[RMDB]
RNA sequence: GGGAACGACUCGAGUAGAGUCGAAAAAGGCUAGUAAGUUUAUAAUUAGCAGGAUCACCAGAGGGAGUAAAUUUAGAGCUGAAAACCACUCACUGAUUCUGUAGUAUACUUGAAUAAAAUAAGGUCACUGUCCAUGUAGCUGGCCAAAUAGCUUGGACUAUGACUACCAUUUCGAUGGUAGUCAUAGAAAAGAAACAACAACAACAAC
Reactivity to DMS in 0.01 (KOAc 150mM, MgCl2 10mM, bicine 150mM(pH8.5), 24C), signal-to-noise 2, nucleotides 027 to 156: a070g030g030c040u000a040g010u000a080a100g000u010u000u000a080u010a080a150u010u010a240g010c010a040g020g010a030u000c010a050c130c140a190g010a100g020g000g060a230g000u000a060a050a160u020u000u010a140g020a070g010c080u010g030a090a070a140a050c040c000a040c030u000c010a110c090u010g010a050u000u000c000u000g000u000a060g010u000a050u000a040c020u000u000g000a100a130u000a070a040a040a070u010a080a080g010g010u000c010a050c050u000g000u000c060c050a060u000g020u000a070g020c060u010g030g000c010c020a070a040a090u000a040g000c070u000u000g010g010a190
Reactivity to 2A3 in 0.01 (KOAc 150mM, MgCl2 10mM, bicine 150mM(pH8.5), 24C), signal-to-noise 4, nucleotides 027 to 156: a000g030g010c010u040a020g030u080a030a120g020u080u160u040a190u060a160a140u130u070a030g010c000a000g010g000a000u010c000a020c090c090a040g010a040g060g030g020a090g020u110a080a110a120u120u150u090a090g030a020g060c070u080g060a040a020a040a060c010c010a100c040u000c000a020c030u010g010a010u040u010c000u030g010u010a030g050u010a040u030a100c020u030u080g050a090a030u130a110a110a030a030u180a070a040g020g000u020c020a000c080u060g070u040c040c020a040u080g030u020a010g030c070u020g020g000c010c020a020a090a030u070a030g030c010u020u040g040g010a010